[RMDB]
Record summary: The record gives the reactivity of an RNA of 177 nucleotides to DMS and 2A3. 2A3 adducts were read by reverse transcription with SuperScript II with manganese. DMS adducts were read by reverse transcription with MarathonRT. The data come from the RNA Mapping Database (RMDB), library M2PK50. The RNA was probed in 150 mM KOAc, 10 mM MgCl2 and 150 mM bicine (pH 8.5) at 24 C.
RNA sequence: GGGAACGACUCGAGUAGAGUCGAAAAUACGACGUAUUCGUACGUCGUAAAGGUAGGAAAGUACAAAGGAGCAAAAGCAUGAGCUCCUAAAAAUCAUGCAAAACACGAGCCGAUUCGUCGGCUCGAACAGUCAGAGAUACUUCGGUAUCUCUGACUGAAAAGAAACAACAACAACAAC
Reactivity to DMS in 0.01 (KOAc 150mM, MgCl2 10mM, bicine 150mM(pH8.5), 24C), signal-to-noise 1, nucleotides 027 to 126: u000a010c000g010a030c000g020u000a030u000u000c220g010u000a010c010g000u010c000g000u010a000a040a050g030g010u000a010g030g000a040a090a060g010u000a050c160a120a080a090g010g070a040g000c040a040a120a160a100g010c000a010u000g010a020g000c040u010c000c020u000a000a000a020a010a030u010c030a010u000g000c010a120a050a050a100c290a060c050g000a000g030c000c000g000a030u010u010c250g000u000c000g010g000c000u010c010g010a020a030
Reactivity to 2A3 in 0.01 (KOAc 150mM, MgCl2 10mM, bicine 150mM(pH8.5), 24C), signal-to-noise 3, nucleotides 027 to 126: u050a000c000g010a000c000g010u010a000u050u100c160g020u040a010c010g000u000c000g000u010a040a000a000g060g030u060a040g040g140a200a080a010g070u050a070c070a090a220a090g000g000a000g000c010a040a120a130a070g000c000a020u020g000a010g020c010u010c020c000u050a010a000a000a000a010u020c000a000u010g010c000a050a020a040a000c200a010c020g000a000g000c010c010g000a010u010u050c100g060u010c000g090g000c000u000c000g000a000a000